The data come from the RNA Mapping Database (RMDB), library OK2TST. The record gives the reactivity of an RNA of 177 nucleotides to DMS and 2A3. 2A3 is a SHAPE reagent: it acylates the 2'-hydroxyl of flexible nucleotides of all four kinds.
[RMDB]
RNA sequence: GGGAACGACUCGAGUAGAGUCGAAAACUUCUGCGCUGCAACCUUCUUCAGUUGGCUGGCGAGAUGUGCCGGCAGACCGUGGAUCAGCAGGGUGUCGGAGCCUGAGUCGAACUCCACCUUGGUGCCGUCUAUUGCUCACAUUCGUGUGAGCAAUAGAAAAAGAAACAACAACAACAAC
Reactivity to DMS in 0.01 (KOAc 150mM, MgCl2 10mM, bicine 150mM(pH8.5), 24C), signal-to-noise 3, nucleotides 027 to 126: c080u000u000c020u010g000c030g010c020u010g000c060a080a090c100c050u000u000c050u010u000c080a060g000u000u010g010g020c020u010g010g000c030g000a120g000a120u000g010u000g030c040c010g010g010c030a060g010a070c040c050g030u000g000g000a050u010c100a190g000c030a110g000g030g010u010g030u010c080g020g000a130g010c020c030u000g000a090g010u000c040g010a050a160c060u000c020c020a060c040c040u000u010g010g020u000g030c050c080g010
Reactivity to 2A3 in 0.01 (KOAc 150mM, MgCl2 10mM, bicine 150mM(pH8.5), 24C), signal-to-noise 3, nucleotides 027 to 126: c000u110u040c010u100g050c060g010c040u060g000c040a100a050c040c020u050u080c010u050u080c070a060g020u050u050g120g000c020u020g010g000c060g020a090g040a110u200g110u170g080c020c020g020g000c010a020g030a060c010c030g070u060g050g020a060u070c030a030g080c010a020g050g000g020u040g060u030c050g040g000a010g020c000c020u020g030a020g020u020c010g020a040a030c020u010c010c010a050c000c030u040u110g030g050u040g060c010c010g010
Source information:
For DMS, 3,766 sequencing reads were counted. For 2A3 the reverse transcriptase was SuperScript II with manganese. High DMS reactivity at an A or C suggests that its Watson-Crick edge is free.